[RMDB]
RNA sequence: GGGAACGACUCGAGUAGAGUCGAAAACAAGUACAUGAGGUUGCUGCUGUAAGAAGUGUUACUGUCGAGUACAACAUUCAUGCUGUAUUAGACACACUACUUGCUUCUUCUAGUCUUAGAACCUUUGCAGGGAUCAAGUUCGCUUGAUCCAAAAGAAACAACAACAACAAC
Reactivity to DMS in 0.01 (KOAc 150mM, MgCl2 10mM, bicine 150mM(pH8.5), 24C), signal-to-noise 9, nucleotides 027 to 129: c080a080a060g060u040a030c130a100u080g030a020g000g010u000u000g030c040u030g000c030u000g010u040a000a000g020a030a000g010u010g020u040u020a070c170u020g000u010c010g000a020g030u000a000c020a000a020c030a020u040u080c250a070u060g040c010u000g020u000a000u000u000a170g010a000c010a020c090a070c050u040a000c050u040u080g000c040u010u020c030u010u010c040u010a030g020u000c090u020u040a050g020a030a030c030c060u020u020u040g020c120a090g020
Reactivity to 2A3 in 0.01 (KOAc 150mM, MgCl2 10mM, bicine 150mM(pH8.5), 24C), signal-to-noise 9, nucleotides 027 to 129: c040a030a060g130u170a070c070a130u180g020a010g030g010u040u060g090c030u020g000c000u010g020u070a010a000g010a010a010g010u030g040u170u070a080c170u040g000u010c000g020a000g010u010a000c000a010a000c000a060u100u300c070a060u200g010c010u000g000u000a010u010u030a000g000a000c000a000c010a000c030u070a030c020u080u200g030c000u000u000c000u020u000c020u030a010g020u000c020u030u050a050g020a040a020c000c000u020u040u090g100c090a090g070